[RMDB]
RNA sequence: GGGAACGACUCGAGUAGAGUCGAAAAGGUUGCGUAUCCUGAAGCUCUUCGGGCCUGCUCUCAGCGCGACCCUCAGCUCGUUCAUGUCAAUGUUUAUCCUGCAGCACAUCGCGAAGCUCGCAUCGGGUAGACACUGAGCUUUCGAGCUCAGUGUCUAAAAAGAAACAACAACAACAAC
Reactivity to DMS in 0.01 (KOAc 150mM, MgCl2 10mM, bicine 150mM(pH8.5), 24C), signal-to-noise 2, nucleotides 027 to 126: g000g030u000u000g020c020g010u000a110u000c080c040u000g010a100a090g010c050u000c080u000u010c100g020g030g000c100c040u020g020c050u000c030u000c050a140g020c060g030c020g020a050c040c020c010u010c060a090g000c030u000c010g020u000u000c070a040u000g010u010c050a040a110u020g000u000u010u010a070u000c030c030u000g000c030a040g000c030a080c110a100u010c100g020c080g020a150a130g020c030u000c150g020c070a070u030c160g000g020g000
This 177-nucleotide RNA was probed chemically with DMS.